[RMDB]
RNA sequence: GGGAACGACUCGAGUAGAGUCGAAAAGAUAUGGACCAAUUGGAGCAACAGCCUGUUGAUCGGAAACGAUCACAGGACAUGCUCCAGAUUGGUCCUAAGUCAAAACUAGGCUCUUCGGAGCCUAGAAGAAUGUUUACUACUUCGGUAGUAAACAUUCAAAAGAAACAACAACAACAAC
Reactivity to DMS in 0.01 (KOAc 150mM, MgCl2 10mM, bicine 150mM(pH8.5), 24C), signal-to-noise 5, nucleotides 027 to 126: g000a020u010a300u020g000g000a010c010c000a010a010u000u010g010g010a030g010c000a080a090c290a190g000c000c000u000g010u000u010g020a010u000c010g010g000a090a040a160c000g000a010u000c000a000c000a010g000g010a010c080a150u010g010c000u000c000c000a000g010a020u000u000g010g000u000c000c000u000a000a050g010u000c020a120a090a100a270c010u000a010g000g000c000u000c000u000u020c220g010g000a010g010c000c000u000a000g010a060a100
Reactivity to 2A3 in 0.01 (KOAc 150mM, MgCl2 10mM, bicine 150mM(pH8.5), 24C), signal-to-noise 4, nucleotides 027 to 126: g000a000u030a030u100g000g010a000c000c000a010a000u020u010g000g000a010g020c080a140a150c070a210g030c040c000u080g040u300u300g070a000u000c000g000g020a040a030a020c000g000a000u010c010a000c000a000g010g010a000c010a040u170g000c000u020c000c000a010g010a000u010u010g020g000u000c000c000u010a000a000g010u010c010a050a000a070a130c010u010a000g000g000c000u000c000u070u120c300g090g000a000g000c030c000u000a000g000a010a010